The record gives the reactivity of an RNA of 177 nucleotides to DMS and 2A3.
DMS adducts were read by reverse transcription with MarathonRT.
The reactions ran in a buffer of 150 mM KOAc, 10 mM MgCl2 and 150 mM bicine (pH 8.5), at 24 C.
For 2A3, 5,907 sequencing reads were counted.
The DMS profile rests on 2,923 reads.

RNA sequence: GGGAACGACUCGAGUAGAGUCGAAAACGGUCGAAAUUCGUUUCGACCGAAUAUGCUAGCUGAGCACAGCUGCUAUGCUAAGCUGAAAGCCAGCUGCAAGCGCGAGUUCGGCGUUCGCGCCGAACAAGUACCCUAUGCAGUUCGCUGCAUAGGGUACAAAAGAAACAACAACAACAAC
Reactivity to DMS in 0.01 (KOAc 150mM, MgCl2 10mM, bicine 150mM(pH8.5), 24C), signal-to-noise 3, nucleotides 027 to 126: c020g020g000u000c010g010a010a000a030u000u000c270g000u000u000u020c000g000a010c000c000g000a040a030u020a090u000g000c000u000a030g010c000u000g000a070g000c010a130c010a010g000c020u010g020c100u000a100u010g000c160u010a100a030g000c010u000g000a130a090a110g020c020c000a010g000c010u010g000c060a100a090g010c170g020c140g000a160g000u010u000c000g010g010c000g020u000u010c200g010c010g020c000c010g010a000a010c010a030a090
Reactivity to 2A3 in 0.01 (KOAc 150mM, MgCl2 10mM, bicine 150mM(pH8.5), 24C), signal-to-noise 4, nucleotides 027 to 126: c000g000g010u010c000g020a000a000a050u130u100c170g070u050u000u010c000g010a000c010c010g010a000a020u130a030u040g020c080u100a010g020c010u010g030a010g020c020a030c000a210g000c000u020g020c060u110a090u300g040c020u050a090a020g000c010u010g020a100a030a000g010c000c010a000g000c030u010g010c010a040a030g080c080g010c030g080a110g050u010u000c010g010g020c000g010u040u040c160g010c000g010c030c010g000a000a000c000a000a000